[RMDB]
RNA sequence: GGGAACGACUCGAGUAGAGUCGAAAAGAAGAUAAGAAACAAGACACCGUGGGCAGAUGACAAGAAAGUCCGUCGGUGUCGGUAAGGUCGUCAGUCACAGGCGACCGUUUUCUGUGACUGUAAAGAAAGCUCCUAAUAUGUUCGCAUAUUAGGAGCUAAAAGAAACAACAACAACAAC
Reactivity to DMS in 0.01 (KOAc 150mM, MgCl2 10mM, bicine 150mM(pH8.5), 24C), signal-to-noise 8, nucleotides 027 to 126: g020a100a080g000a140u040a070a040g010a090a040a060c090a090a110g000a000c000a000c000c000g060u000g010g000g000c000a050g010a140u040g020a190c300a120a090g000a080a150a100g000u000c000c000g010u010c010g000g010u000g000u000c000g020g020u010a090a070g010g010u000c000g010u010c010a050g010u030c170a040c230a050g010g000c040g000a030c020c030g000u010u010u000u000c020u000g010u010g010a130c060u000g010u020a060a080a110g010a070a090
Reactivity to 2A3 in 0.01 (KOAc 150mM, MgCl2 10mM, bicine 150mM(pH8.5), 24C), signal-to-noise 1, nucleotides 027 to 126: g090a010a020g050a010u170a160a020g030a100a060a010c040a110a000g000a000c000a010c000c010g000u040g000g000g000c020a030g040a300u090g060a170c070a090a080g090a220a040a020g010u010c010c000g110u160c000g000g000u000g000u000c010g000g020u060a000a000g050g000u040c030g020u020c040a000g020u050c020a020c050a070g010g000c000g030a040c030c010g000u100u060u000u050c000u010g020u040g070a080c050u060g060u170a180a080a000g090a070a090
Annotation: The data come from the RNA Mapping Database (RMDB), library OK1LIB. An RNA of 177 nucleotides, treated with DMS and 2A3 and read out base by base. For 2A3 the reverse transcriptase was SuperScript II with manganese. Conditions: 150 mM KOAc, 10 mM MgCl2 and 150 mM bicine (pH 8.5), 24 C.